[RMDB]
RNA sequence: GGGAACGACUCGAGUAGAGUCGAAAAGAUAUGGAAAGCGAAGAACACCUGGUACUUUGAUCUGAUGGUAAGGCUCGGAAACGAGCCUUACCAUCAGGGAGUACUGGGUGGGAGCUUUCCUAAGUCAUCUUAAAGCUAUGUUCGCAUAGCUUUAAGAAAAAGAAACAACAACAACAAC
Reactivity to DMS in 0.01 (KOAc 150mM, MgCl2 10mM, bicine 150mM(pH8.5), 24C), signal-to-noise 2, nucleotides 027 to 126: g000a060u000a300u020g010g000a010a010a030g010c010g010a190a200g010a160a260c010a010c000c010u000g000g000u000a000c000u000u000u000g010a130u010c020u000g000a020u000g000g010u000a020a020g010g020c000u000c020g000g000a070a080a240c000g030a000g010c010c000u000u000a000c000c000a010u000c000a010g000g000g000a000g000u000a000c000u000g000g010g000u000g000g000g010a100g000c000u000u000u000c000c000u000a020a060g010u000c060a200